Structure probing data (2A3 and DMS) for a 207-nucleotide construct.
It was measured as part of the RMDB library OK3TST.
Reactivities are given for positions 27 through 156.
Conditions: 150 mM KOAc, 10 mM MgCl2 and 150 mM bicine (pH 8.5), 24 C.

RNA sequence: GGGAACGACUCGAGUAGAGUCGAAAAGGAGAUAGAGCUGACCUCAGAUUGCUAUAUCCAGGGUUUCAAGCAGCAUCACCAGGACUCUUGACUUUGCUUUCUUUCUGUUUCUCAGGUAGUUUGCAGGCUAACUAUCCCCAGCUUCAAGGAAGCAUGAUAAUCACCCCUCAUUCGUGAGGGGUGAUUAAAAAGAAACAACAACAACAAC
Reactivity to 2A3 in 0.01 (KOAc 150mM, MgCl2 10mM, bicine 150mM(pH8.5), 24C), signal-to-noise 1, nucleotides 027 to 156: g030g000a040g010a040u070a050g030a020g030c010u030g030a040c000c020u040c030a010g010a080u060u090g070c070u070a030u030a060u160c020c030a030g060g000g010u010u080u130c110a080a020g000c020a000g050c000a040u050c020a040c030c020a020g000g050a030c000u000c000u090u070g040a040c000u060u100u030g040c000u000u020u080c000u000u060u030c030u040g070u010u090u000c030u010c030a020g040g020u010a020g000u000u050u070g050c040a010g070g040c050u020a030a030c010u020a130u090c010c000c000c000a000g020c020u070u090c050a050a040g080g000a020a010g000c010a050u030g000a050
Reactivity to DMS in 0.01 (KOAc 150mM, MgCl2 10mM, bicine 150mM(pH8.5), 24C), signal-to-noise 1, nucleotides 027 to 156: g000g020a040g020a150u000a100g020a130g010c010u010g000a120c050c020u010c050a060g050a100u000u020g000c130u000a140u000a130u000c000c000a120g010g050g020u000u000u000c070a040a060g010c080a130g010c050a060u000c060a090c030c040a110g010g010a140c050u000c010u000u000g020a120c070u000u000u000g000c000u000u000u000c010u010u000u010c020u000g030u010u000u000c030u000c050a020g020g000u000a070g020u000u000u000g070c070a130g030g010c100u000a040a050c020u000a060u000c010c000c000c010a170g000c010u000u000c020a070a100g050g000a050a010g020c020a050u020g010a190